Structure probing data (DMS and 2A3) for a 177-nucleotide construct. It was measured as part of the RMDB library TTRDES. The DMS profile rests on 5,764 reads. DMS (dimethyl sulfate) methylates the pairing face of unpaired adenines and cytosines. The 2A3 profile rests on 11,907 reads.

RNA sequence: GGGAACGACUCGAGUAGAGUCGAAAAGAUAUGGAGCCAUGACAAGCGACGAUCUACCACUCGGAAACGAGUGUGUAGGGAGCUUGCAUGGCUCCUAAGUCAAAAUCCGUACGUUCGCGUACGGAAACCUCAAUUAGAGGUUCGCCUCUAAUUGAGGAAAAGAAACAACAACAACAAC
Reactivity to DMS in 0.01 (KOAc 150mM, MgCl2 10mM, bicine 150mM(pH8.5), 24C), signal-to-noise 3, nucleotides 027 to 126: g010a040u010a300u010g000g010a010g030c000c000a000u000g010a170c030a010a010g010c000g010a060c290g000a010u030c000u000a000c000c000a010c000u000c000g010g010a080a070a140c000g000a020g020u000g010u020g010u000a000g000g000g000a040g020c000u000u000g000c020a010u000g010g010c000u000c000c000u000a010a070g000u000c020a100a080a150a150u000c000c000g020u010a010c000g020u000u010c260g030c000g020u000a000c000g010g000a010a010a070
Reactivity to 2A3 in 0.01 (KOAc 150mM, MgCl2 10mM, bicine 150mM(pH8.5), 24C), signal-to-noise 3, nucleotides 027 to 126: g000a000u050a020u130g000g000a000g000c000c020a010u030g090a300c010a050a010g040c000g300a300c030g000a120u000c010u000a010c010c000a010c000u000c010g030g010a050a050a050c000g010a010g000u010g020u080g010u000a000g000g000g000a000g000c000u010u000g000c000a010u000g000g010c000u010c000c000u000a010a000g000u000c000a000a000a000a270u030c000c000g000u000a010c010g000u010u110c300g000c000g110u000a000c000g000g000a040a010a000